[RMDB]
RNA sequence: GGGAACGACUCGAGUAGAGUCGAAAAGAUAUGGAUCCUGACCAUCGAUGAAAUCGGAAACGAUGGAGAUGAGUCAGGGAUCCUAAGUCAAAAUCUCGAGAUGCGAGUUCGCUCGCAUCUCGAGAAAGUCCCCUAUUUAGUUCGCUAAAUAGGGGACAAAAGAAACAACAACAACAAC
Reactivity to 2A3 in 0.01 (KOAc 150mM, MgCl2 10mM, bicine 150mM(pH8.5), 24C), signal-to-noise 2, nucleotides 027 to 126: g020a020u090a050u140g000g000a000u010c000c000u000g010a000c000c030a000u020c010g300a300u050g010a000a000a040u010c010g010g030a130a030a050c020g000a010u020g020g000a020g000a000u040g030a060g030u020c040a030g030g000g000a000u000c000c000u020a150a030g050u020c050a070a060a100a300u020c010u000c020g000a030g030a020u040g010c050g000a040g050u130u120c290g100c140u000c000g000c000a000u000c010u000c020g010a000g010a000a000a000
Reactivity to DMS in 0.01 (KOAc 150mM, MgCl2 10mM, bicine 150mM(pH8.5), 24C), signal-to-noise 2, nucleotides 027 to 126: g010a030u000a300u010g000g010a010u000c000c000u010g000a010c000c000a000u010c010g020a110u020g010a080a070a010u000c000g000g000a160a090a220c000g010a000u010g000g000a070g010a020u000g000a160g010u000c000a010g020g030g010a010u000c000c000u010a040a130g010u010c030a080a070a130a090u010c010u010c020g000a010g000a020u000g000c000g000a030g050u000u010c230g040c020u000c000g020c000a000u000c020u000c000g000a010g000a000a010a110